RNA sequence: GGGAACGACUCGAGUAGAGUCGAAAAAUCGGGAACCUAUUACUGUGUCACCACUAAGGCUAAGUCCGUUCAACAAGAUCUUGACGUUAUUUUGCCUGGUGAGUUUUCCAAGAAGCAGUUAGGACUGGGGCGGAAGGAUUCGUCCUUCCGAAAAGAAACAACAACAACAAC
Reactivity to 2A3 in 0.01 (KOAc 150mM, MgCl2 10mM, bicine 150mM(pH8.5), 24C), signal-to-noise 9, nucleotides 027 to 129: a000u100c040g000g010g020a050a070c020c010u030a070u080u130a060c040u040g030u020g080u130c020a020c020c000a010c020u100a200a060g010g000c020u020a010a000g020u000c020c010g070u180u150c020a040a050c040a130a060g040a210u070c030u040u040g010a010c010g030u090u120a060u030u050u020u040g020c000c010u000g010g000u040g030a100g030u060u060u090u020c060c020a070a040g050a040a010g020c010a010g010u020u040a020g010g020a030c030u030g000g000g020g010
Reactivity to DMS in 0.01 (KOAc 150mM, MgCl2 10mM, bicine 150mM(pH8.5), 24C), signal-to-noise 9, nucleotides 027 to 129: a060u030c070g020g010g030a080a070c020c060u000a040u040u050a060c040u000g020u020g020u020c070a080c040c010a030c030u020a070a040g010g010c020u010a030a020g000u010c210c030g000u070u040c000a020a050c190a130a110g000a120u020c080u000u000g000a040c020g000u010u030a020u000u000u000u000g020c030c020u040g000g000u030g000a070g000u000u010u020u030c040c070a050a070g010a090a090g010c010a030g020u020u030a050g020g000a150c040u030g030g020g000g030